[RMDB]
RNA sequence: GGGAACGACUCGAGUAGAGUCGAAAACAUGUGUCAGCCGGAGGCUUAAUCGAAGAUUUUUAUACAUACGGACGCAAGGCCUGGAACAAGCCGAACAUUCAAGUAAAUAACAACAACACGUAUAAAGUUGCACCACUGAAUGAGACUAAUGUAUAGAGCUGUGUACCAUGUUCGCAUGGUACACAGCAAAAGAAACAACAACAACAAC
Reactivity to 2A3 in 0.01 (KOAc 150mM, MgCl2 10mM, bicine 150mM(pH8.5), 24C), signal-to-noise 2, nucleotides 027 to 156: c030a050u230g070u020g050u110c070a040g000c050c010g020g070a030g030g080c110u150u070a040a060u100c110g010a030a010g000a130u110u070u050u070u090a110u000a080c050a000u090a000c050g030g000a030c030g030c020a030a050g050g000c040c100u100g040g010a020a000c000a050a000g000c040c040g000a010a010c000a020u060u040c010a010a070g030u070a170a030a100u210a080a020c020a000a030c000a000a010c020a050c170g130u220a040u120a140a110a010g010u020u020g020c060a030c000c000a030c000u030g000a010a060u010g000a020g010a030c000u070a070a030u050g050u050a030u030a010g090a020
This 207-nucleotide RNA was probed chemically with 2A3. The reactions ran in a buffer of 150 mM KOAc, 10 mM MgCl2 and 150 mM bicine (pH 8.5), at 24 C. The 2A3 profile rests on 587 reads. High 2A3 reactivity points to a flexible backbone, as in loops and unpaired stretches. Source: RMDB library OK3TST, as collected in RNAgym.